[RMDB]
RNA sequence: GGGAACGACUCGAGUAGAGUCGAAAAUUACUCUUGUUAGGUGAAAGUUGAUGGUCGCCGAGCCAGUCCGUACAUCCAAAAAGGACUCUAUGUAGUAGGAAGUAGAGAGCCUAUGAGAGUUAGAGUCAUGCCUAUUUUGUGUUCGCACAAAAUAGAACAAGCUGUUUAUGUUCGCAUAAACAGCUUGAAAAGAAACAACAACAACAAC
Reactivity to DMS in 0.01 (KOAc 150mM, MgCl2 10mM, bicine 150mM(pH8.5), 24C), signal-to-noise 2, nucleotides 027 to 156: u000u000a060c030u000c030u000u020g000u000u000a010g030g020u000g020a080a080a110g000u000u000g010a120u000g000g020u000c020g020c050c020g010a170g000c040c030a100g010u000c020c020g060u010a090c090a130u020c050c040a050a050a140a090a140g040g000a060c000u000c050u000a070u000g000u000a230g020u000a040g040g010a030a150g020u010a140g000a210g010a280g010c030c000u000a030u000g010a180g050a190g010u000u010a040g000a070g030u000c070a080u000g030c050c000u010a020u000u000u010u000g020u010g010u000u000c300g040c010a030c010a000a000a010a010u000a030g000a030a190
Reactivity to 2A3 in 0.01 (KOAc 150mM, MgCl2 10mM, bicine 150mM(pH8.5), 24C), signal-to-noise 3, nucleotides 027 to 156: u100u030a060c020u030c020u030u050g050u080u090a060g010g020u030g060a090a100a090g070u100u100g070a110u080g050g030u050c040g040c110c050g000a030g030c030c010a010g040u010c030c030g010u020a050c010a080u040c040c020a020a120a020a020a070g100g010a000c010u000c010u020a030u060g050u020a050g000u010a010g030g020a060a020g010u120a030g030a020g000a020g060c000c000u020a010u030g040a050g010a000g110u040u040a020g010a000g030u010c010a040u110g050c000c000u000a000u000u010u000u000g020u000g020u040u030c170g060c100a000c000a000a000a000a000u000a010g030a010a010

This 207-nucleotide RNA was probed chemically with DMS and 2A3. Conditions: 150 mM KOAc, 10 mM MgCl2 and 150 mM bicine (pH 8.5), 24 C. The data come from the RNA Mapping Database (RMDB), library M2RFPK.